RNA sequence: GGGAACGACUCGAGUAGAGUCGAAAAUCUAGCAAGUGUUUUGCUAUUGGUAGCUAUGGUAGGAGCAGUCGUAUUGACAUUGAAACGUCGUGCUCAAGCACCUGUUCAUGAUACUUUUAUUAAACACGCCAUAGGGAGGAUUCGUCCUCCCUAUGGCAAAAGAAACAACAACAACAAC
Reactivity to DMS in 0.01 (KOAc 150mM, MgCl2 10mM, bicine 150mM(pH8.5), 24C), signal-to-noise 1, nucleotides 027 to 126: u010c020u000a030g010c000a050a130g030u000g000u000u000u000u000g020c030u000a030u000u000g010g020u000a030g010c080u000a070u000g000g000u010a050g010g020a070g070c010a000g010u030c200g030u010a060u000u000g050a040c030a060u010u000g020a120a100a140c240g020u000c020g000u000g000c000u000c160a050a160g010c010a080c020c010u010g000u000u000c020a020u000g000a090u000a000c020u030u000u010u000a090u010u010a040a030a030c040a010c070
Reactivity to 2A3 in 0.01 (KOAc 150mM, MgCl2 10mM, bicine 150mM(pH8.5), 24C), signal-to-noise 1, nucleotides 027 to 126: u040c010u010a000g060c050a100a040g000u000g010u000u010u000u020g000c000u030a070u100u050g040g000u020a050g000c090u040a000u110g000g010u060a010g000g100a000g000c000a010g010u080c020g020u050a040u130u280g020a010c030a050u020u170g050a010a000a100c080g020u000c040g040u050g000c000u000c010a030a020g030c000a020c000c010u010g030u090u160c030a020u010g030a010u060a040c030u010u110u010u080a090u100u080a060a030a000c020a000c000